[RMDB]
RNA sequence: GGGAACGACUCGAGUAGAGUCGAAAAAUAUUAGUUGUCCUGGGCAUCAUGUUUAAUCUCAUAGUUUUAACUAUGGUGUAUUAUCAGAAUGACAACAUCAAUCAAAGGAUGGCAGAACUUACAAGCACACAGAAGUCUAGUUCGCUAGACUUCUGUGAAAAGAAACAACAACAACAAC
Reactivity to DMS in 0.01 (KOAc 150mM, MgCl2 10mM, bicine 150mM(pH8.5), 24C), signal-to-noise 2, nucleotides 027 to 126: a050u020a100u000u000a110g030u010u000g010u000c010c030u000g010g030g000c010a050u010c030a040u010g000u010u000u000a000a000u010c030u000c100a030u010a080g010u010u010u020u030a000a110c000u000a010u000g000g010u000g020u020a040u000u000a030u000c020a060g000a160a090u000g030a060c030a070a060c050a130u020c150a060a050u000c180a130a070a080g010g000a050u000g010g000c020a100g000a060a020c080u000u010a060c150a080a100g010c220a080
Reactivity to 2A3 in 0.01 (KOAc 150mM, MgCl2 10mM, bicine 150mM(pH8.5), 24C), signal-to-noise 2, nucleotides 027 to 126: a000u170a090u140u110a040g000u030u020g010u020c000c000u010g030g020g000c000a010u030c020a030u030g040u010u010u050a010a060u000c050u040c110a110u090a130g060u040u040u020u180a010a020c030u070a020u010g040g040u000g000u020a100u190u030a030u100c000a020g110a170a160u140g010a050c010a030a020c000a050u080c040a060a060u070c050a060a110a020g070g020a020u040g020g020c040a040g050a070a000c020u030u070a010c030a090a050g020c010a050
An RNA of 177 nucleotides, treated with DMS and 2A3 and read out base by base. 2A3 adducts were read by reverse transcription with SuperScript II with manganese. For DMS the reverse transcriptase was MarathonRT. Reactivities are given for positions 27 through 126.